[RMDB]
RNA sequence: GGGAACGACUCGAGUAGAGUCGAAAAUACAGAUUAGGGCACACCCCACUAGAGACACGUCACAGAACCUUUGACAAGACAUUAGUAGUUUAAAAUUCUGAUAGCCUCACUCCUCCUAUACCUCAGUAAGAAUUACUAUUCUAUGGGGUAAAUGAUAUAAAUAGUGACCUUUCGAGGUCACUAUUUAAAAAGAAACAACAACAACAAC
Reactivity to DMS in 0.01 (KOAc 150mM, MgCl2 10mM, bicine 150mM(pH8.5), 24C), signal-to-noise 1, nucleotides 027 to 156: u000a190c020a130g020a150u000u000a000g000g020g000c060a110c140a040c070c000c000c020a100c090u000a070g000a100g040a080c030a050c120g020u010c030a120c040a070g020a080a070c060c020u000u010u010g020a100c030a070a180g020a110c070a040u000u000a070g020u000a090g000u000u010u020a090a090a060a060u010u000c020u000g020a100u000a130g000c060c030u000c000a020c050u010c050c030u000c020c030u000a150u000a010c010c030u000c000a010g010u010a120a090g020a020a010u000u000a070c080u000a090u000u000c010u010a070u020g000g010g020g010u010a010a050a070u020g000a110u010a130

Source: RMDB library OK3TST, as collected in RNAgym. An RNA of 207 nucleotides, treated with DMS and read out base by base. The DMS profile rests on 1,633 reads.